Notes
This 177-nucleotide RNA was probed chemically with 2A3 and DMS. Values cover nucleotides 27 to 126. The DMS profile rests on 918 reads.
RNA sequence: GGGAACGACUCGAGUAGAGUCGAAAAGGAAAGAUGCAAACAUCAAAGACACAACAGCAAAGUGUCAAGCUGAAAGACGUGGAACUGGCUAAUAAAAUUGGCCGGAUCAUACCACGAUGAAAAAAAAGGGUGUAAUUAAGUUCGCUUAAUUACACCCAAAAGAAACAACAACAACAAC
Reactivity to 2A3 in 0.01 (KOAc 150mM, MgCl2 10mM, bicine 150mM(pH8.5), 24C), signal-to-noise 1, nucleotides 027 to 126: g110g020a150a110a060g010a030u070g000c080a090a010a160c000a080u020c040a030a120a000g010a010c000a000c010a220a000c020a100g110c030a000a110a040g000u000g020u030c020a020a050g000c010u030g060a070a120a000g110a040c000g000u000g000g010a030a040c000u000g020g000c000u000a000a010u080a140a220a000a080u060u050g000g000c070c000g000g020a020u040c040a040u050a080c000c020a000c000g070a090u140g000a090a040a020a000a000a000a020a040
Reactivity to DMS in 0.01 (KOAc 150mM, MgCl2 10mM, bicine 150mM(pH8.5), 24C), signal-to-noise 1, nucleotides 027 to 126: g000g000a040a050a090g030a140u010g010c080a110a040a100c090a000u000c090a180a150a170g000a120c010a050c050a050a100c130a220g000c220a110a150a110g010u000g040u000c000a060a120g040c050u030g000a090a040a040g010a060c010g030u000g000g000a060a090c000u000g000g000c000u010a030a030u000a030a030a030a300u020u000g000g070c000c000g090g030a050u000c090a060u000a130c010c000a000c000g020a150u000g020a000a000a000a000a050a000a000a180